[RMDB]
Source: RMDB library TTRDES, as collected in RNAgym.
The record gives the reactivity of an RNA of 177 nucleotides to 2A3 and DMS.
The reactions ran in a buffer of 150 mM KOAc, 10 mM MgCl2 and 150 mM bicine (pH 8.5), at 24 C.
Values cover nucleotides 27 to 126.
The DMS profile rests on 2,467 reads.
RNA sequence: GGGAACGACUCGAGUAGAGUCGAAAAGAUAUGGACGUGUACGAAGCGAUAAGCUAGGUGUCGGAAACGACACUAGCUUUUGACGCUUCGACACGUCCUAAGUCAAAGAAGUAGUUCGCUACUUCAACUCGAAGGAUAUGUUCGCAUAUCCUUCGAGAAAAGAAACAACAACAACAAC
Reactivity to 2A3 in 0.01 (KOAc 150mM, MgCl2 10mM, bicine 150mM(pH8.5), 24C), signal-to-noise 2, nucleotides 027 to 126: g040a000u060a040u140g000g000a010c010g010u010g000u220a230c020g030a000a000g000c050g030a060u030a170a010g010c010u020a060g270g300u080g010u080c000g000g000a120a070a030c000g000a000c000a000c000u020a010g000c010u020u000u030u040g040a020c060g000c020u030u000c000g000a000c010a000c010g010u000c000c000u000a000a010g010u000c000a020a040a090g000a010a000g020u010a000g020u040u150c300g010c190u000a010c000u010u010c000a020a070
Reactivity to DMS in 0.01 (KOAc 150mM, MgCl2 10mM, bicine 150mM(pH8.5), 24C), signal-to-noise 2, nucleotides 027 to 126: g000a020u010a300u010g000g010a010c000g020u010g000u000a230c000g000a010a000g040c000g020a170u000a020a010g010c010u000a010g030g000u000g010u000c000g000g000a080a100a170c010g000a020c010a030c010u000a000g000c000u000u000u000u000g000a170c090g020c020u010u000c000g000a010c000a010c010g010u000c010c000u000a000a060g000u000c010a120a130a160g000a010a040g030u000a020g010u010u010c300g020c000u000a000c000u000u000c000a120a270